[RMDB]
RNA sequence: GGGAACGACUCGAGUAGAGUCGAAAAGAAUCACCGUACCUAUUUAGGUUUACGCUCCAAGAUCGGUGGAUAGCAGCCCUAUCAAUAUCUACGAGAACUGUGCUAUGUUUAGAAGAUUAGGUAGUCUAUUACACAGCCAUGUUCGCAUGGCUGUGAAGGUUACGCCUAGAUUCGUCUAGGCGUAACCAAAAGAAACAACAACAACAAC
Reactivity to DMS in 0.01 (KOAc 150mM, MgCl2 10mM, bicine 150mM(pH8.5), 24C), signal-to-noise 1, nucleotides 027 to 156: g000a140a050u040c050a130c010c020g000u000a020c030c020u000a160u000u000u040a020g030g000u000u000u000a040c060g000c050u000c010c010a060a140g000a050u000c060g000g020u030g010g040a070u000a140g030c000a180g040c090c040c020u010a250u010c010a040a090u000a070u000c060u000a060c060g000a110g000a100a060c020u020g010u010g020c130u010a060u000g000u000u000u000a150g010a080a120g000a130u010u000a120g010g070u020a090g010u000c070u000a120u000u000a200c010a000c000a010g000c010c040a020u000g050u010u030c300g000c010a060u000g010g000c020u010g040u000g000a000a000
Reactivity to 2A3 in 0.01 (KOAc 150mM, MgCl2 10mM, bicine 150mM(pH8.5), 24C), signal-to-noise 2, nucleotides 027 to 156: g040a040a030u110c010a020c010c000g060u070a030c000c000u050a140u180u170u260a080g000g000u000u030u150a080c090g010c020u060c040c050a040a110g010a120u070c000g010g030u020g000g080a040u080a020g080c100a000g010c050c000c000u040a040u090c060a050a090u010a010u050c020u050a050c030g050a020g060a120a040c030u030g020u030g100c090u060a030u080g070u050u010u030a080g010a120a030g010a070u000u130a010g050g000u010a020g030u020c050u000a120u080u130a030c010a000c000a020g000c010c000a000u010g000u060u080c070g000c040a000u010g000g000c000u010g000u010g000a000a000

The data come from the RNA Mapping Database (RMDB), library M2RFPK. Structure probing data (DMS and 2A3) for a 207-nucleotide construct. The 2A3 profile rests on 1,106 reads. Reactivities are given for positions 27 through 156. The reactions ran in a buffer of 150 mM KOAc, 10 mM MgCl2 and 150 mM bicine (pH 8.5), at 24 C. For DMS the reverse transcriptase was MarathonRT.